Annotation:
Structure probing data (2A3 and DMS) for a 177-nucleotide construct. DMS (dimethyl sulfate) methylates the pairing face of unpaired adenines and cytosines. DMS adducts were read by reverse transcription with MarathonRT.
RNA sequence: GGGAACGACUCGAGUAGAGUCGAAAAGAUAUGGAGAUCCACAGCUUUUGACGUGCCCUAGUCGGAAACGACUAGGUGCACGAUAAGCUGGGAUCUCCUAAGUCAAACGGCGAGUUCGCUCGCCGAACAUACAAACUGACUUCGGUCAGUUUGUAUGAAAAGAAACAACAACAACAAC
Reactivity to 2A3 in 0.01 (KOAc 150mM, MgCl2 10mM, bicine 150mM(pH8.5), 24C), signal-to-noise 6, nucleotides 027 to 126: g000a010u030a020u120g000g010a000g000a010u040c010c020a230c010a300g000c040u070u210u300u300g300a260c100g000u010g000c020c000c000u010a000g000u010c000g010g010a030a040a020c000g000a000c000u000a010g000g000u000g010c000a000c000g000a000u020a010a000g000c000u000g000g000g000a000u000c000u000c000c000u000a000a010g000u000c010a060a050a110c030g020g000c010g000a000g020u110u170c280g110c160u010c010g000c000c000g000a000a000
Reactivity to DMS in 0.01 (KOAc 150mM, MgCl2 10mM, bicine 150mM(pH8.5), 24C), signal-to-noise 5, nucleotides 027 to 126: g000a020u000a220u000g000g000a010g010a010u000c000c000a110c020a010g010c000u000u000u000u000g020a210c090g020u000g010c000c000c000u000a010g010u000c000g010g010a060a050a100c000g010a020c000u000a000g000g020u010g010c000a000c020g010a040u010a010a010g020c000u000g000g010g000a000u000c010u000c000c000u000a000a070g020u000c030a130a130a300c020g010g010c000g010a020g020u000u020c300g020c000u000c000g020c000c000g000a040a110